[RMDB]
RNA sequence: GGGAACGACUCGAGUAGAGUCGAAAAGAUAUGGAGUUGGCAUGCAGUUGGCCUGCACCGACGAAGCUAGUCGGAAACGACUAGCAGAGGUGCAGGCCAACUGAACUACAUGACCAACUCCUAAGUCGGAAGACAAUAAGUUCGCUUAUUGUCUUCCAAAAGAAACAACAACAACAAC
Reactivity to DMS in 0.01 (KOAc 150mM, MgCl2 10mM, bicine 150mM(pH8.5), 24C), signal-to-noise 3, nucleotides 027 to 126: g000a100u010a300u010g000g000a020g020u000u000g000g000c020a000u000g020c020a010g010u000u000g000g000c020c030u000g000c000a020c000c000g020a180c300g000a160a120g030c000u000a000g020u010c000g000g000a100a080a230c010g010a040c010u000a010g040c010a000g000a120g020g070u000g000c010a020g020g010c000c000a000a000c020u000g000a010a020c090u030a300c040a000u000g000a150c000c000a010a020c000u000c000c000u000a020a070g010u010c110
Background: Source: RMDB library TTRINS, as collected in RNAgym. This 177-nucleotide RNA was probed chemically with DMS. The RNA was probed in 150 mM KOAc, 10 mM MgCl2 and 150 mM bicine (pH 8.5) at 24 C.